[RMDB]
RNA sequence: GGGAACGACUCGAGUAGAGUCGAAAACGUCAUCGCCGUUUUGGUUCCGCUGGUAACCAAGCGUGUCAUAGACGACGCGAUCGCGGCCGACCACAGACCGCUGGCGCCCUGGGCCGUGGUUCUGGUCCACCGUACAAAGAUUCGUCUUUGUACGGUGAAAAGAAACAACAACAACAAC
Reactivity to DMS in 0.01 (KOAc 150mM, MgCl2 10mM, bicine 150mM(pH8.5), 24C), signal-to-noise 6, nucleotides 027 to 126: c060g000u010c080a050u020c180g010c020c020g010u000u020u010u010g010g010u000u000c080c040g020c150u040g000g010u040a030a030c030c030a040a030g000c000g000u010g000u030c070a110u020a150g010a070c100g010a100c040g010c030g000a050u020c150g000c020g010g000c070c070g000a060c040c070a050c180a090g000a060c040c040g020c030u030g030g000c020g010c040c020c020u010g010g020g020c020c010g000u000g000g010u010u010c060u000g010g010u010c080
Reactivity to 2A3 in 0.01 (KOAc 150mM, MgCl2 10mM, bicine 150mM(pH8.5), 24C), signal-to-noise 9, nucleotides 027 to 126: c020g040u030c020a060u070c040g010c020c010g010u090u070u070u090g030g010u030u030c050c030g130c280u210g030g080u120a040a030c030c020a030a000g020c010g010u080g040u080c020a060u090a160g080a060c080g010a020c030g020c010g060a070u110c060g000c010g040g010c030c050g020a040c010c020a050c020a060g070a040c010c020g030c100u160g020g000c030g080c030c020c040u060g020g040g000c010c010g010u020g010g000u040u020c020u040g000g010u010c020